[RMDB]
RNA sequence: GGGAACGACUCGAGUAGAGUCGAAAAGAUGCCGACAAGCUUGAGCGCCCGGUUCGAUCGGGCAUGUGCGCAGUCGUCGUUACCGGAGGCGGUCGUGGCCGCGCUAAUCGGCGUCGGCGCCGACGAAAAUCUCUGCACGAUUCGUCGUGCAGAGAUUAAAAGAAACAACAACAACAAC
Reactivity to DMS in 0.01 (KOAc 150mM, MgCl2 10mM, bicine 150mM(pH8.5), 24C), signal-to-noise 2, nucleotides 027 to 126: g000a060u060g000c000c000g000a050c040a100a220g000c050u010u040g050a030g000c190g000c000c000c000g010g000u000u070c130g020a090u010c010g020g030g020c020a000u020g020u000g000c040g000c050a120g010u000c010g030u130c030g000u010u030a060c020c010g000g000a190g020g000c000g050g030u000c030g000u010g030g000c000c000g090c050g010c000u000a080a060u010c010g000g010c020g010u030c040g000g000c000g020c080c020g010a110c170g000a060a070
Reactivity to 2A3 in 0.01 (KOAc 150mM, MgCl2 10mM, bicine 150mM(pH8.5), 24C), signal-to-noise 4, nucleotides 027 to 126: g050a030u150g020c010c000g030a030c050a050a130g050c040u280u300g030a000g060c070g010c000c000c000g000g030u130u230c150g080a180u080c030g000g010g000c020a040u100g040u060g000c030g000c030a030g010u030c000g000u020c010g050u040u090a040c000c030g080g000a180g110g190c030g000g020u060c010g030u070g060g000c000c000g000c000g010c020u070a130a150u090c010g020g010c010g030u020c010g000g000c000g040c010c010g080a160c030g010a080a090

The data come from the RNA Mapping Database (RMDB), library OK1LIB.
Chemical mapping of a 177-nucleotide RNA with DMS and 2A3.
The reactions ran in a buffer of 150 mM KOAc, 10 mM MgCl2 and 150 mM bicine (pH 8.5), at 24 C.
For 2A3, 2,290 sequencing reads were counted.
2A3 adducts were read by reverse transcription with SuperScript II with manganese.